[RMDB]
RNA sequence: GGGAACGACUCGAGUAGAGUCGAAAAGAUAUGGACGUACUACCCACCUUCACCUAGUCGAAGAACUACGCAAACUCGGAAACGAGUUUGCGUAGGGAGACUAUGUGAAGAGGUACGUCCUAAGUCACAAAUAAAGAAGCUUCGGCUUCUUUAUUUGAAAAGAAACAACAACAACAAC
Reactivity to DMS in 0.01 (KOAc 150mM, MgCl2 10mM, bicine 150mM(pH8.5), 24C), signal-to-noise 1, nucleotides 027 to 126: g020a110u000a130u010g000g070a010c010g020u000a000c010u010a150c010c010c010a300c120c000u000u000c000a000c000c070u000a000g010u000c000g000a210a160g000a150a180c030u000a000c000g010c010a000a010a010c000u010c000g000g000a130a090a270c000g000a010g000u000u000u000g010c020g050u000a000g020g020g000a100g010a010c000u000a010u000g010u010g000a010a000g000a090g060g000u000a020c000g010u000c000c000u000a000a090g000u000c130a140